Structure probing data (DMS and 2A3) for a 207-nucleotide construct.
The DMS profile rests on 2,736 reads.
It was measured as part of the RMDB library OK3TST.
For 2A3 the reverse transcriptase was SuperScript II with manganese.
RNA sequence: GGGAACGACUCGAGUAGAGUCGAAAAGAUUUGAGCGAAUUGAUGUACGGCGACAAUUCUCUGCUGAUGACCCGACUCGAAAUCAUCACGGGAGUUGUAACGUUUGCAGUGAGUUUGUUUUUUGUCCUGUGCAAAUUGAAGAAAAAGAACGCGCUGCACGUAUCUAACCGUUCGCGGUUAGAUACGUAAAAGAAACAACAACAACAAC
Reactivity to DMS in 0.01 (KOAc 150mM, MgCl2 10mM, bicine 150mM(pH8.5), 24C), signal-to-noise 1, nucleotides 027 to 156: g000a120u010u000u000g010a090g010c000g010a090a110u000u000g020a110u000g030u000a080c000g000g020c000g050a100c040a010a020u000u000c000u020c010u020g110c110u040g000a040u000g000a050c000c040c080g000a180c150u000c060g020a140a130a070u000c040a060u000c020a090c070g020g080g000a070g020u000u010g020u000a040a110c060g000u010u000u000g040c030a060g040u000g010a010g030u000u000u000g000u000u000u010u000u000u000g020u010c040c110u000g000u020g000c150a080a080a180u020u010g000a040a130g000a010a050a050a060a060g010a040a030c050g000c000g020c000u010g010c010
Reactivity to 2A3 in 0.01 (KOAc 150mM, MgCl2 10mM, bicine 150mM(pH8.5), 24C), signal-to-noise 3, nucleotides 027 to 156: g050a020u110u100u160g030a040g050c000g020a020a140u110u140g070a100u100g080u100a050c030g030g060c060g050a030c030a000a030u080u000c100u010c010u090g070c120u010g010a000u020g010a020c000c080c080g140a110c060u020c080g020a060a030a090u030c020a040u030c010a010c010g010g010g000a000g020u010u000g000u020a090a010c000g000u010u060u120g010c000a000g010u000g040a060g010u020u020u020g120u030u040u000u000u010u070g100u050c030c030u140g060u090g050c040a080a110a080u080u220g080a130a110g030a070a070a020a010a010g060a020a000c000g000c000g000c040u010g000c000